[RMDB]
RNA sequence: GGGAACGACUCGAGUAGAGUCGAAAAGGACUUAGGUUCGCCUAAGUCCAAAUAUCGUCUACAAGUACGGUAGACGAAGAUAACGUACAGUACAGAAGUACAAAAGGAGAGACUUCGGUCUCUCCAAUCAUAGUCAAUAGUUCGCUAUUGACUAUGAAAAAGAAACAACAACAACAAC
Reactivity to 2A3 in 0.01 (KOAc 150mM, MgCl2 10mM, bicine 150mM(pH8.5), 24C), signal-to-noise 9, nucleotides 027 to 126: g010g000a000c000u000u000a000g020g040u050u040c170g070c050c000u000a000a000g010u000c000c000a000a000a000u020a000u000c000g000u000c000u000a000c010a100a140g120u040a060c070g050g010u010a010g000a000c050g000a000a020g050a030u170a070a040c090g030u070a050c090a110g040u030a020c020a090g170a270a030g110u030a020c020a040a110a030a040g010g000a010g000a000g000a000c010u030u050c230g060g000u000c000u000c000u000c000c000a000a000
Reactivity to DMS in 0.01 (KOAc 150mM, MgCl2 10mM, bicine 150mM(pH8.5), 24C), signal-to-noise 8, nucleotides 027 to 126: g010g010a010c000u000u000a000g000g000u010u010c280g010c000c000u010a000a010g000u000c000c000a010a040a080u010a080u000c000g010u000c000u000a000c010a040a080g040u000a030c090g000g020u000a010g000a020c000g010a010a040g010a110u000a100a110c160g010u010a090c160a060g010u000a060c100a150g010a130a090g010u000a030c080a080a070a120a110g000g000a010g010a010g010a010c000u000u020c200g030g010u000c010u000c000u000c000c000a000a010